[RMDB]
RNA sequence: GGGAACGACUCGAGUAGAGUCGAAAACGGUAUUGGUCAAGGCUAUACCGACAGCGCACCUUCAAAAGGGCGCUUAAUCCCCGGCCAAGCGCCGAAAUAUGAAUAGACACCGCUGGGCUGGGAGGGCAAAACAUGGCGAUCUUCGGAUCGCCAUGAACAAUCCUUCUGUCUUCGGACAGAAGGAUUGAAAAGAAACAACAACAACAAC
Reactivity to DMS in 0.01 (KOAc 150mM, MgCl2 10mM, bicine 150mM(pH8.5), 24C), signal-to-noise 1, nucleotides 027 to 156: c040g000g040u020a030u030u000g090g010u010c040a120a130g080g030c040u000a110u000a020c000c040g020a130c050a120g020c020g060c000a070c010c000u000u010c170a110a120a210a180g010g020g020c030g020c000u000u010a040a110u010c000c000c000c040g030g030c010c020a060a030g020c000g020c000c030g000a040a050a080u000a300u030g010a130a170u010a140g020a200c120a140c060c000g020c010u010g010g040g000c000u010g000g010g010a040g000g010g050c080a030a040a090a120c000a030u020g000g000c000g040a090u010c000u000u030c220g000g000a000u010c000g060c000c000a020u000g000a010a080
Reactivity to 2A3 in 0.01 (KOAc 150mM, MgCl2 10mM, bicine 150mM(pH8.5), 24C), signal-to-noise 1, nucleotides 027 to 156: c000g000g000u020a050u050u140g000g050u090c060a120a110g100g010c000u040a020u000a010c000c000g050a130c110a030g000c020g000c070a300c100c010u080u020c080a120a140a000a000g010g000g000c010g000c000u000u010a010a000u000c030c000c050c020g010g010c000c000a030a000g000c010g000c080c030g110a040a070a000u260a110u180g120a110a060u100a120g120a050c010a010c040c010g030c000u020g030g000g010c040u000g010g000g000a110g080g000g020c040a020a020a110a070c030a070u000g000g000c000g020a000u000c000u000u070c220g160g010a000u000c000g020c020c000a000u000g000a000a000